[RMDB]
RNA sequence: GGGAACGACUCGAGUAGAGUCGAAAAGGGCCCUAGGCACACAUUUUGUCUUCACAGGUCACACUGAGUGUGUCGGCCCACAGGAGGGCAAGCGUGAAAAUGGCCUUUUGACAGCGUGAAAAUGGCCUUCUCCGCCACCCGCCCCAGGGUGGUGGUGUCAAUACCUCCAUUUCGAUGGAGGUAUUGAAAAAGAAACAACAACAACAAC
Reactivity to DMS in 0.01 (KOAc 150mM, MgCl2 10mM, bicine 150mM(pH8.5), 24C), signal-to-noise 2, nucleotides 027 to 156: g000g050g000c020c010c060u000a080g020g040c020a190c010a030c020a180u000u000u000u000g030u000c000u020u000c010a070c110a050g000g010u000c030a060c030a000c010u010g010a200g040u010g060u000g000u000c040g020g010c000c000c010a050c080a080g000g010a080g000g010g010c000a040a060g010c040g010u010g000a060a080a100a140u010g000g010c000c020u010u000u000u020g010a120c060a130g010c080g030u000g000a050a040a070a120u000g020g010c020c030u010u000c040u010c010c000g030c000c000a030c000c000c000g010c080c010c040c050a250g020g000g010u010g000g020u000g000g000u000g000
Reactivity to 2A3 in 0.01 (KOAc 150mM, MgCl2 10mM, bicine 150mM(pH8.5), 24C), signal-to-noise 4, nucleotides 027 to 156: g030g010g010c000c010c040u060a080g020g040c020a000c010a020c010a100u050u070u030u200g020u000c020u050u030c020a050c030a060g030g000u010c000a010c000a000c030u140g120a110g190u240g000u010g000u030c100g040g000c000c040c010a090c030a030g020g030a010g010g010g000c020a030a000g030c060g030u050g070a070a030a010a040u090g060g000c020c000u030u070u030u040g110a100c060a050g050c080g060u160g120a050a050a070a080u080g040g000c010c000u100u000c030u000c000c000g010c020c000a000c000c010c000g030c040c030c000c010a010g010g000g000u000g000g000u000g000g010u000g000